This 207-nucleotide RNA was probed chemically with DMS and 2A3. The reactions ran in a buffer of 150 mM KOAc, 10 mM MgCl2 and 150 mM bicine (pH 8.5), at 24 C. Reactivities are given for positions 27 through 156.
[RMDB]
RNA sequence: GGGAACGACUCGAGUAGAGUCGAAAACUCCCCUCAAAAUCGUUUCAGUCCAAAAUUGAUUCGGCGUCCCUGUCAUGAGGCCGAAACGAAGGCACGUACCCCUUCGAAUGGCGUCGGGGAGUCAGCGAAAGCACUGACCCUUUCGAGGGUCAGUGAAGACAAAGUGAGAAUUCGUUCUCACUUUGUCAAAAGAAACAACAACAACAAC
Reactivity to DMS in 0.01 (KOAc 150mM, MgCl2 10mM, bicine 150mM(pH8.5), 24C), signal-to-noise 1, nucleotides 027 to 156: c060u000c010c000c040c060u000c030a050a070a090a110u000c000g030u000u010u000c020a070g100u000c010c050a040a060a100a200u000u000g000a140u000u010c040g040g000c090g000u000c020c050c030u000g050u020c100a160u000g000a160g010g050c000c000g010a040a020a090c000g020a080a070g020g010c040a150c110g000u010a120c140c100c000c050u000u000c040g020a070a180u010g000g020c010g030u000c030g000g000g010g000a060g000u000c010a140g020c010g000a070a090a170g040c010a000c000u000g000a030c000c000c010u000u010u020c300g020a020g000g010g030u000c000a000g060u010g010a020a110
Reactivity to 2A3 in 0.01 (KOAc 150mM, MgCl2 10mM, bicine 150mM(pH8.5), 24C), signal-to-noise 3, nucleotides 027 to 156: c020u070c000c000c030c020u150c060a160a140a120a210u120c040g040u010u030u010c030a060g060u090c050c030a110a050a080a120u100u190g030a110u120u040c070g040g010c020g060u020c000c000c020u030g020u050c030a130u150g050a030g090g000c050c010g080a050a020a000c010g010a010a010g040g000c130a000c190g140u200a060c000c050c000c000u020u020c030g030a080a050u140g000g000c070g100u030c010g010g000g020g000a000g050u030c010a010g040c000g050a050a050a010g050c000a010c000u010g000a000c000c010c000u040u030u090c180g080a020g000g000g020u000c000a000g000u000g000a000a000